The data come from the RNA Mapping Database (RMDB), library OK3TST.
Structure probing data (2A3 and DMS) for a 207-nucleotide construct.
DMS adducts were read by reverse transcription with MarathonRT.
Values are in units of 0.01, from 0 to 300, in steps of 10.
RNA sequence: GGGAACGACUCGAGUAGAGUCGAAAAGCCGGCGGGGAGGAGGCGAUCCGUCUCUCUGAGGAGAUCGAGGCGGAUGGCGAAACGCUUCUGCGCAUCGCCUGCGAGCAUGGGCUUGAAGGCAUCAUCGCCAAAGACCGGAAUAGCACCUAUCGCGGCGAACGUCAUGCAAUUUCGAUUGCAUGACGUUAAAAGAAACAACAACAACAAC
Reactivity to 2A3 in 0.01 (KOAc 150mM, MgCl2 10mM, bicine 150mM(pH8.5), 24C), signal-to-noise 2, nucleotides 027 to 156: g110c020c010g010g010c030g000g050g030g000a040g050g010a020g040g000c020g030a000u010c020c000g050u010c000u010c000u030c040u100g160a090g170g060a040g010a070u190c150g010a020g010g000c000g000g010a000u010g030g000c030g010a070a100a000c080g000c000u010u030c030u120g050c020g020c040a100u060c030g010c010c060u190g000c020g000a010g020c070a060u170g000g020g020c020u020u020g010a030a040g000g000c010a080u100c020a080u080c100g040c100c010a050a120a020g010a090c020c000g020g030a070a050u100a020g000c000a150c120c000u060a050u060c000g010c010g000g000c010g030
Reactivity to DMS in 0.01 (KOAc 150mM, MgCl2 10mM, bicine 150mM(pH8.5), 24C), signal-to-noise 1, nucleotides 027 to 156: g030c040c030g020g000c000g030g000g000g050a110g000g030a080g010g030c040g000a000u000c000c000g000u010c010u000c030u000c020u000g010a210g050g000a160g040a070u010c090g030a040g050g010c000g000g010a040u000g030g010c000g010a070a300a080c040g000c010u010u000c010u020g020c050g050c020a140u000c010g090c030c010u010g030c030g000a080g060c000a080u000g020g020g040c050u000u030g010a230a190g030g070c000a200u000c130a070u010c130g030c030c100a100a180a110g000a030c000c030g000g000a130a150u000a060g010c050a050c000c050u010a140u000c030g000c000g050g050c010g000